[RMDB]
RNA sequence: GGGAACGACUCGAGUAGAGUCGAAAAGUAGAUCAGCUCUGAAUUGUUGAUCUUUCCAAUAACAAAGCCUUAACUGAUGCUACUGUUUGGAUUAUUAAACAAGAAAAAUUGCCUGUUUCAGUUGCGGCAUGUCUAACGUAUUCGUACGUUAGACAUGAAAAGAAACAACAACAACAAC
Reactivity to DMS in 0.01 (KOAc 150mM, MgCl2 10mM, bicine 150mM(pH8.5), 24C), signal-to-noise 9, nucleotides 027 to 126: g010u010a010g010a010u000c000a010g010c000u000c300u010g010a140a160u010u010g010u000u000g010a020u000c010u000u000u000c010c010a120a130u020a100a100c160a080a100a130g010c010c020u010u010a030a010c020u000g010a030u000g000c020u000a070c040u000g010u000u000u000g010g010a290u010u000a110u000u010a070a100a110c130a030a040g010a100a080a020a030a040u000u000g010c110c080u000g010u000u000u000c010a030g010u000u000g010c300g000g000
Reactivity to 2A3 in 0.01 (KOAc 150mM, MgCl2 10mM, bicine 150mM(pH8.5), 24C), signal-to-noise 9, nucleotides 027 to 126: g050u050a000g000a010u010c000a010g020c030u040c120u290g250a270a240u200u090g010u000u010g010a000u000c000u000u010u000c010c000a010a070u230a080a030c090a060a080a020g020c000c010u050u050a010a010c020u020g010a010u020g020c010u010a030c010u020g040u040u030u020g030g010a030u040u040a070u090u220a250a160a070c080a080a040g060a030a070a010a010a010u050u050g040c030c030u040g030u000u020u020c000a000g000u020u010g020c020g000g000
Structure probing data (DMS and 2A3) for a 177-nucleotide construct. For DMS, 16,143 sequencing reads were counted. The RNA was probed in 150 mM KOAc, 10 mM MgCl2 and 150 mM bicine (pH 8.5) at 24 C.